[RMDB]
RNA sequence: GGGAACGACUCGAGUAGAGUCGAAAAAUGUGGGCUGCCAGCAGAACAUGCCAAGAGGUCAAGCUCCAUGUGCAGGCAUUUAUCAAGCCCCUCCUGCCAUCAUGGCACUGGCCCCAUCUAGUCAUAUGGCCACGCCCAUCAGGUGACGGAGACCACAGUGCGUAUUUACUUUCGAGUAAAUACGCACAAAAGAAACAACAACAACAAC
Reactivity to DMS in 0.01 (KOAc 150mM, MgCl2 10mM, bicine 150mM(pH8.5), 24C), signal-to-noise 3, nucleotides 027 to 156: a100u000g020u000g020g030g050c010u000g000c030c010a150g030c080a140g020a090a080c050a050u000g010c120c010a080a140g030a030g010g000u000c120a050a120g020c030u000c020c050a020u000g020u010g020c050a110g020g020c080a140u000u000u000a160u000c110a130a140g020c020c010c000c020u000c050c030u000g000c030c030a090u000c090a040u000g020g000c080a080c030u000g000g010c000c010c060c010a170u020c040u020a150g000u010c080a140u010a090u000g000g000c000c020a050c030g000c040c010c010a150u000c060a150g060g020u000g010a060c030g000g000a160g010a100c020c030a060c060a230
Reactivity to 2A3 in 0.01 (KOAc 150mM, MgCl2 10mM, bicine 150mM(pH8.5), 24C), signal-to-noise 3, nucleotides 027 to 156: a000u120g010u070g000g030g010c040u060g030c020c020a030g020c030a030g100a150a050c070a080u050g030c060c070a060a060g030a070g020g010u040c020a040a040g020c040u000c000c000a000u040g030u040g000c020a030g060g000c080a090u000u130u170a300u300c190a160a110g020c020c010c000c000u050c000c000u020g000c000c010a110u130c000a000u060g010g010c010a000c060u010g000g000c010c000c000c010a050u040c070u030a030g050u040c020a040u070a030u210g010g000c040c020a020c060g020c010c000c010a020u050c020a000g000g020u030g000a050c070g040g030a020g020a010c000c020a000c040a060